[RMDB]
Chemical mapping of a 177-nucleotide RNA with 2A3 and DMS. For DMS, 1,650 sequencing reads were counted. Conditions: 150 mM KOAc, 10 mM MgCl2 and 150 mM bicine (pH 8.5), 24 C. It was measured as part of the RMDB library OK2TRN.
RNA sequence: GGGAACGACUCGAGUAGAGUCGAAAACGACUAGUGAUCUCAGCUAGGUACCGAUCGUACGAUCGACAUGCUAGUAUCUAGGCACGCAUAGAGCUAGGUACAGUACCUAGGACUAGCGUACUCAUGGUGACUCUCCGGUUUUCGAACCGGAGAGUCAAAAAGAAACAACAACAACAAC
Reactivity to 2A3 in 0.01 (KOAc 150mM, MgCl2 10mM, bicine 150mM(pH8.5), 24C), signal-to-noise 2, nucleotides 027 to 126: c020g150a100c020u010a000g010u040g170a220u000c100u010c090a000g000c000u010a030g000g040u000a000c030c010g030a020u020c030g070u240a110c210g010a050u020c000g010a060c060a080u230g040c010u050a040g010u020a160u010c000u000a020g210g000c040a010c080g070c010a100u110a110g030a000g010c030u000a000g000g100u050a030c040a020g010u000a010c000c000u020a030g040g010a030c000u000a000g000c050g000u020a010c070u090c110a070u160g190g060
Reactivity to DMS in 0.01 (KOAc 150mM, MgCl2 10mM, bicine 150mM(pH8.5), 24C), signal-to-noise 2, nucleotides 027 to 126: c060g000a100c070u000a040g010u000g010a150u010c110u000c090a300g000c000u000a000g010g020u010a020c090c030g020a010u010c000g010u010a060c150g000a000u000c010g020a130c130a080u000g020c050u000a050g030u010a040u020c010u000a030g040g020c040a050c090g030c200a160u000a040g000a090g010c010u000a020g010g020u000a040c100a110g010u000a010c000c000u000a000g000g000a040c000u000a020g010c010g020u000a130c110u000c100a120u020g010g020